[RMDB]
RNA sequence: GGGAACGACUCGAGUAGAGUCGAAAAGUGCGAGACAACAACAGUGCCGCGAUACCGACGGCGAUGAUCGCUCCAGGCACCACCGAGAACGAGCCGGUCAUCUCAGCGACCAUGAUCAUGACGGCCAGACGAAAGCGAAGUUCGCUUCGCUUUCGUCAAAAGAAACAACAACAACAAC
Reactivity to DMS in 0.01 (KOAc 150mM, MgCl2 10mM, bicine 150mM(pH8.5), 24C), signal-to-noise 2, nucleotides 027 to 126: g010u000g000c040g000a070g010a170c080a220a250c080a080a100c180a010g080u020g020c010c020g040c040g000a180u000a010c100c060g030a090c080g010g000c090g020a050u000g000a050u030c110g030c080u000c190c180a080g000g020c010a130c160c090a060c060c000g000a050g000a120a030c170g000a040g010c030c050g000g040u000c040a090u010c050u020c120a140g000c170g010a040c090c120a120u000g020a060u040c040a020u000g000a080c020g000g000c000c030a140
Reactivity to 2A3 in 0.01 (KOAc 150mM, MgCl2 10mM, bicine 150mM(pH8.5), 24C), signal-to-noise 3, nucleotides 027 to 126: g070u090g030c040g040a090g070a110c070a190a010c020a080a020c020a130g070u050g180c000c020g040c020g040a030u090a110c060c040g100a140c030g070g000c020g020a070u050g010a020u030c010g000c020u010c020c010a060g030g020c010a040c000c000a070c010c020g060a040g010a090a080c100g020a030g040c060c020g030g010u000c000a060u000c010u000c020a010g020c020g040a050c000c030a040u090g020a020u040c030a010u090g050a060c020g000g000c000c000a020
Background
Chemical mapping of a 177-nucleotide RNA with DMS and 2A3. Reactivities are given for positions 27 through 126. It was measured as part of the RMDB library OK1LIB. The reactions ran in a buffer of 150 mM KOAc, 10 mM MgCl2 and 150 mM bicine (pH 8.5), at 24 C.